[RMDB]
RNA sequence: GGGAACGACUCGAGUAGAGUCGAAAAAAUUUAAUUCAAAAAAACGUUAAGUUUAGGGACCAAACUAAUACUAAUUAAAUAAGUUAAGGGACCAAACUAAUACUAAUUAAAUAAGUUAAGGGACCAACUAAUCAACGUAAUUCGUUACGUUGAUUAGAAAAGAAACAACAACAACAAC
Reactivity to DMS in 0.01 (KOAc 150mM, MgCl2 10mM, bicine 150mM(pH8.5), 24C), signal-to-noise 1, nucleotides 027 to 126: a020a030u100u000u030a030a060u010u020c030a000a000a130a090a050a050a050c080g000u000u000a080a060g020u000u020u000a080g000g000g000a130c060c000a080a070a060c050u000a040a030u010a010c060u000a000a090u000u070a030a050a050u000a060a050g010u000u010a050a050g050g000g000a050c010c020a000a000a000c000u010a030a000u020a030c010u000a010a000u000u010a020a000a030u030a020a030g000u030u030a030a100g030g000g000a270c000c010a000a250
Reactivity to 2A3 in 0.01 (KOAc 150mM, MgCl2 10mM, bicine 150mM(pH8.5), 24C), signal-to-noise 2, nucleotides 027 to 126: a000a000u120u070u080a040a000u030u040c110a130a000a000a000a000a000a150c060g000u030u000a040a080g000u000u000u100a090g000g010g020a000c010c010a160a000a000c020u000a020a020u070a180c030u040a040a030u300u200a140a090a130u140a150a000g000u040u030a060a150g010g010g000a000c000c000a000a000a000c000u000a030a000u050a050c020u070a000a070u070u010a030a050a050u130a040a050g070u170u010a070a040g040g000g050a000c020c000a000a000